[RMDB]
RNA sequence: GGGAACGACUCGAGUAGAGUCGAAAAUGAGAAGCAUUCGUGCUUCUCAGAAAUGCUGCCCAAAGAGGACGUGGGGGUGUCUGGGCUGCUAAACUCAUCAGCUAACCGCGAUCUUCGGAUCGCGGAAUUAUACAGCUGAUUUCGAUCAGCUGUAUAAAAAAGAAACAACAACAACAAC
Reactivity to 2A3 in 0.01 (KOAc 150mM, MgCl2 10mM, bicine 150mM(pH8.5), 24C), signal-to-noise 2, nucleotides 027 to 126: u050g000a000g000a000a000g010c020a010u060u130c240g090u060g010c000u000u010c000u000c000a000g010a010a050a020u120g010c010u040g030c000c000c010a090a170a020g180a020g050g040a020c080g060u210g000g030g020g000g000u050g020u030c020u030g020g030g010c000u030g000c000u020a070a000a010c050u060c040a130u070c020a060g060c050u090a100a090c000c020g020c010g010a010u000c000u030u070c250g090g000a000u010c000g020c000g000g000a000a000
Reactivity to DMS in 0.01 (KOAc 150mM, MgCl2 10mM, bicine 150mM(pH8.5), 24C), signal-to-noise 4, nucleotides 027 to 126: u010g010a020g010a010a020g020c000a040u010u010c220g030u000g010c000u000u000c010u000c010a020g000a120a130a100u010g000c050u000g010c020c000c010a060a090a160g000a130g000g000a040c070g010u000g010g000g010g000g020u010g020u000c040u000g000g000g000c030u000g000c050u000a050a040a130c090u000c030a080u000c110a090g020c140u020a090a220c010c000g000c010g000a020u000c000u000u000c210g020g000a010u000c000g010c000g010g000a000a010